[RMDB]
Chemical mapping of a 177-nucleotide RNA with 2A3. For 2A3, 278 sequencing reads were counted. The data come from the RNA Mapping Database (RMDB), library OK1LIB. For 2A3 the reverse transcriptase was SuperScript II with manganese.
RNA sequence: GGGAACGACUCGAGUAGAGUCGAAAACAUGUAUAAGGGACUCAGAGAUUACAACUCUAUAGCAUCAUGUAUAUGCAAACUGACAAACGAAUCUGAUGGGUUCUCCGAAUCUUUAUACGGAAUUGGGAACAGCGCUGAGUUUCGACUCAGCGCUGUUAAAAGAAACAACAACAACAAC
Reactivity to 2A3 in 0.01 (KOAc 150mM, MgCl2 10mM, bicine 150mM(pH8.5), 24C), signal-to-noise 1, nucleotides 027 to 126: c000a050u100g060u030a090u060a200a180g030g000g040a130c000u060c000a000g000a000g000a050u220u000a220c030a000a030c000u000c030u300a190u080a300g040c000a000u100c000a130u140g230u300a300u070a000u300g000c000a000a000a210c030u140g000a090c060a090a070a000c090g040a010a030u000c000u090g010a080u050g160g000g160u050u010c160u000c040c060g060a000a000u000c100u030u180u060a060u000a000c010g000g130a070a180u020u000g030g000g070